[RMDB]
RNA sequence: GGGAACGACUCGAGUAGAGUCGAAAAGAAGGAAUGGUAAGAUUGCUUAUAAGCUGGAUCUUGAGGGUGAGUGGUCUCUUCUACGCAUUGGGCUUAUAAGCCAUCUUACUAGUUCUUCUUUUCAAUGCAUUUAUCCUCUGUUCGCAGAGGAUAAAUGAAAAGAAACAACAACAACAAC
Reactivity to 2A3 in 0.01 (KOAc 150mM, MgCl2 10mM, bicine 150mM(pH8.5), 24C), signal-to-noise 9, nucleotides 027 to 126: g000a000a000g020g010a020a030u030g000g000u000a000a000g000a000u000u010g000c000u000u000a000u000a000a000g000c020u080g130g020a020u020c010u050u070g010a030g040g080g040u160g060a150g080u240g150g140u080c020u000c000u130u040c020u040a040c060g010c040a020u030u050g130g000g000c000u000u000a000u000a000a000g000c000c000a000u000c000u000u000a000c000u000a000g000u000u000c000u000u000c000u000u000u000u000c010a010a050u130g040
Reactivity to DMS in 0.01 (KOAc 150mM, MgCl2 10mM, bicine 150mM(pH8.5), 24C), signal-to-noise 5, nucleotides 027 to 126: g000a020a000g010g000a010a020u000g000g010u010a000a010g000a010u000u000g000c000u010u000a010u000a000a010g010c010u000g010g010a020u000c020u010u000g000a050g000g000g010u020g000a090g030u020g020g020u010c030u010c020u010u000c020u000a050c160g020c180a030u000u000g000g010g010c000u000u000a010u000a000a010g000c010c050a000u000c000u000u000a000c000u000a010g010u000u000c000u000u000c000u000u000u000u000c030a100a100u030g010